[RMDB]
RNA sequence: GGGAACGACUCGAGUAGAGUCGAAAAGAUAUGGACUAAGGGAGAUCAGUAUCGGAAACGAUACGGGAUCGACGAUCUUAGGUCCUAAGUCAAAAGACUACUCUAUUCUUCGGAAUAGAGUAGUCAACUUCUAAAACCUCUUCGGAGGUUUUAGAAGAAAAGAAACAACAACAACAAC
Reactivity to DMS in 0.01 (KOAc 150mM, MgCl2 10mM, bicine 150mM(pH8.5), 24C), signal-to-noise 1, nucleotides 027 to 126: g020a070u000a300u020g020g000a100c000u020a000a000g000g000g000a020g010a010u010c000a190g020u000a010u000c010g000g000a060a050a180c010g000a010u000a020c020g000g050g000a000u010c010g000a090c160g000a010u020c000u010u000a020g000g010u010c000c000u000a020a150g020u000c010a090a090a070a140g020a010c000u000a010c000u010c000u010a000u000u000c000u000u020c230g040g010a050a000u000a010g000a010g040u000a000g010u000c000a010a040

An RNA of 177 nucleotides, treated with DMS and read out base by base. Source: RMDB library TTRDEL, as collected in RNAgym. Values cover nucleotides 27 to 126.